[RMDB]
RNA sequence: GGGAACGACUCGAGUAGAGUCGAAAAUAACCUCUUCGGAGGUUAAAGACGGGGUCGUGGAGCUGACAUGCUUAGUACUGAAGCCUCCACGGUAUGGGAGCAACAGCAGCUCGUAACAUCGACGGAGGCACCCUUCAGAAUGACGUUCGCGUCAUAAUCAACCUAAGGUAUUCGUACCUUAGGUUGAAAAAGAAACAACAACAACAAC
Reactivity to DMS in 0.01 (KOAc 150mM, MgCl2 10mM, bicine 150mM(pH8.5), 24C), signal-to-noise 1, nucleotides 027 to 156: u010a020a040c000c020u000c010u000u020c230g040g010a020g000g030u000u000a010a030a110g020a200c030g000g000g040g020u010c020g030u000g010g020a090g000c020u030g000a160c010a100u000g050c010u000u000a300g010u000a050c020u020g020a060a070g000c010c000u010c030c000a300c000g000g030u010a110u000g010g020g040a050g020c040a050a150c070a160g000c050a130g030c010u000c010g000u000a170a150c130a070u010c000g030a080c020g070g010a030g020g010c030a050c020c010c050u000u000c070a140g010a090a020u000g010a040c020g020u000u000c190g020c010g010u000c020a010u000a040a190
Reactivity to 2A3 in 0.01 (KOAc 150mM, MgCl2 10mM, bicine 150mM(pH8.5), 24C), signal-to-noise 3, nucleotides 027 to 156: u040a000a000c010c000u040c030u030u100c250g190g000a020g040g000u000u020a030a020a020g040a010c070g040g000g000g020u010c040g000u110g070g020a010g000c020u070g070a130c000a130u290g000c000u030u050a030g030u000a040c010u020g040a100a040g010c000c000u000c000c000a020c000g000g000u010a020u020g210g130g020a000g000c050a050a120c030a260g070c020a000g000c030u020c020g140u140a080a080c040a070u150c040g050a080c070g030g010a010g000g000c010a040c010c010c000u050u060c030a190g130a300a130u050g000a000c010g010u030u070c240g060c010g100u020c000a010u180a090a160
The data come from the RNA Mapping Database (RMDB), library RNAMAK. Structure probing data (DMS and 2A3) for a 207-nucleotide construct. Reactivities are given for positions 27 through 156. For 2A3, 1,384 sequencing reads were counted. The reactions ran in a buffer of 150 mM KOAc, 10 mM MgCl2 and 150 mM bicine (pH 8.5), at 24 C. For DMS the reverse transcriptase was MarathonRT. For 2A3 the reverse transcriptase was SuperScript II with manganese.